Background:
The record gives the reactivity of an RNA of 177 nucleotides to DMS. The data come from the RNA Mapping Database (RMDB), library OK2TST.

RNA sequence: GGGAACGACUCGAGUAGAGUCGAAAAGCCGUUAACGGAGGGGCAUUGAAUACAGAUGAAGAGUACUACAAGGUUGUGAAAAGCACUGAGACAGACUCUGAGUACGUAUUUGACAUCGACGCAAAGAUCGAAGGGCUGAAUUCGUUCAGCCCUUCGAAAAAGAAACAACAACAACAAC
Reactivity to DMS in 0.01 (KOAc 150mM, MgCl2 10mM, bicine 150mM(pH8.5), 24C), signal-to-noise 1, nucleotides 027 to 126: g020c030c010g000u000u000a140a260c110g010g040a070g000g040g000g010c070a160u040u000g000a110a050u000a030c140a130g020a030u000g030a230a010g030a000g050u000a080c050u000a080c070a020a270g000g010u000u000g010u010g000a040a110a130a130g010c020a010c070u000g000a300g000a110c150a050g010a030c000u000c000u000g000a210g000u000a010c090g000u020a020u000u000u000g000a150c150a000u030c030g000a110c060g000c210a050a040a000g000a110